RNA sequence: GGGAACGACUCGAGUAGAGUCGAAAAGUGUCGAUCUGCAAAAAAGGCACAUGGAAAAUGUAAUUUAUCAGUGUUCAACACUGAGUUGAACAGAUAGCUAUCUAAUCAAUGUUAACUUUCCAGGGAACGCUGACGACCAGUUCGCUGGUCGUCAGCGAAAAGAAACAACAACAACAAC
Reactivity to 2A3 in 0.01 (KOAc 150mM, MgCl2 10mM, bicine 150mM(pH8.5), 24C), signal-to-noise 1, nucleotides 027 to 126: g000u000g000u000c000g150a120u010c010u190g190c120a130a080a000a030a050a250g010g030c000a050c000a000u040g000g040a190a020a000a110u170g000u030a080a100u020u060u080a070u000c000a050g140u050g000u040u080c080a250a120c050a000c130u300g020a020g000u000u000g000a050a050c000a070g120a000u080a030g100c300u200a000u040c090u090a170a000u000c030a030a030u030g000u050u010a010a050c000u100u080u000c050c110a090g000g060g100a000a000